[RMDB]
The record gives the reactivity of an RNA of 207 nucleotides to DMS and 2A3. The RNA was probed in 150 mM KOAc, 10 mM MgCl2 and 150 mM bicine (pH 8.5) at 24 C. The DMS profile rests on 2,700 reads. The 2A3 profile rests on 2,401 reads. The data come from the RNA Mapping Database (RMDB), library OK3TST. 2A3 adducts were read by reverse transcription with SuperScript II with manganese.

RNA sequence: GGGAACGACUCGAGUAGAGUCGAAAAGACAACAAUAAUAAUAAUUACAGAUAACUUUUAUUCAGUGUCAUCUACUUUCUAGGUGUUUGCUAUGCACUUGACAUAGUGCUUGCAUUUAGUCUUCACCAGAACCAAAGGAGCACAGAUGAGAAAACUAAUGGUCAUAAUAUUUCGAUAUUAUGACCAUAAAAGAAACAACAACAACAAC
Reactivity to DMS in 0.01 (KOAc 150mM, MgCl2 10mM, bicine 150mM(pH8.5), 24C), signal-to-noise 1, nucleotides 027 to 156: g010a140c040a070a120c010a030a120u020a120a120u000a100a060u000a050a110u020u030a300c010a270g010a170u010a060a110c010u010u000u000u000a050u020u000c080a140g030u000g000u010c030a130u000c000u000a060c050u000u000u000c030u000a070g040g040u010g000u010u000u020g010c000u010a070u000g000c020a040c080u000u000g020a150c140a090u000a050g040u010g000c030u010u020g020c010a040u000u010u020a090g020u000c030u000u000c000a100c080c000a110g040a050a110c030c030a040a100a080g010g030a080g020c040a060c040a080g010a060u000g000a090g010a080a080a080a120c040u020a080
Reactivity to 2A3 in 0.01 (KOAc 150mM, MgCl2 10mM, bicine 150mM(pH8.5), 24C), signal-to-noise 4, nucleotides 027 to 156: g040a010c030a040a010c040a040a040u120a090a040u110a140a030u140a120a060u280u180a110c080a050g170a120u130a100a130c050u100u160u110u110a120u190u090c050a030g010u010g010u030c020a050u000c020u050a110c040u030u080u040c020u030a110g000g000u000g020u020u020u090g010c020u010a010u130g010c000a020c020u020u050g060a070c060a130u230a010g030u050g020c000u020u030g010c010a020u070u050u070a060g010u040c020u010u030c060a020c020c000a000g000a030a010c030c010a040a110a070g010g000a030g010c050a000c020a050g050a020u070g020a030g050a040a120a020a000c080u090a020